[RMDB]
RNA sequence: GGGAACGACUCGAGUAGAGUCGAAAACCGUAGGAACCGUGUCCACUUGGACCUUGGCUCCCCACCAGAAAUUCGAAAGAGUUUCUGAGGCCAAGCUAGUGGGCCGGUUCCUAAACGGAAACGUCUCGUAAAUCGAUUCGUCGAUUUACGAGACGAACCUAUUUAUGCCGUUCGCGGCAUAAAUAGGAAAAGAAACAACAACAACAAC
Reactivity to DMS in 0.01 (KOAc 150mM, MgCl2 10mM, bicine 150mM(pH8.5), 24C), signal-to-noise 1, nucleotides 027 to 156: c050c000g050u000a100g000g010a040a020c010c000g000u000g020u000c010c040a080c050u000u000g120g030a010c140c050u010u000g040g040c010u000c300c180c050c120a300c140c020a020g000a000a010a020u000u000c000g010a300a060a270g010a040g050u010u010u000c010u010g000a300g020g000c000c000a020a010g010c030u000a040g000u000g040g030g040c020c000g010g000u000u000c000c000u010a000a030a050c040g000g020a070a120a210c010g030u000c010u000c000g000u000a000a000a000u000c040g070a040u000u020c300g000u000c000g010a030u000u010u000a010c000g000a040g000a000c040g010a060a030